[RMDB]
RNA sequence: GGGAACGACUCGAGUAGAGUCGAAAAUUGGACCAAGUUUAGAACUCAUUCCAUACUUUGUUACCAUACUUCUUGCAGUAGCUGUAACUCUUUCUAAGUCAUUUGAAGCACCUGUAGAUACAUCCUUGCGCGGAUAAAUCUUCGGAUUUAUCCGCGCAAAAGAAACAACAACAACAAC
Reactivity to 2A3 in 0.01 (KOAc 150mM, MgCl2 10mM, bicine 150mM(pH8.5), 24C), signal-to-noise 1, nucleotides 027 to 126: u020u040g000g000a000c000c000a040a000g060u000u000u250a130g030a000a060c050u050c180a100u060u050c040c070a180u050a200c020u140u160u010g120u150u080a040c000c000a000u060a070c000u040u000c000u000u000g000c000a060g000u000a010g010c030u070g020u200a080a080c010u030c050u040u240u000c010u110a140a000g000u000c020a140u000u000u270g070a010a000g050c000a040c050c030u020g020u000a000g000a050u040a160c050a030u020c000c000u000u030

The data come from the RNA Mapping Database (RMDB), library OK1LIB. This 177-nucleotide RNA was probed chemically with 2A3. For 2A3 the reverse transcriptase was SuperScript II with manganese.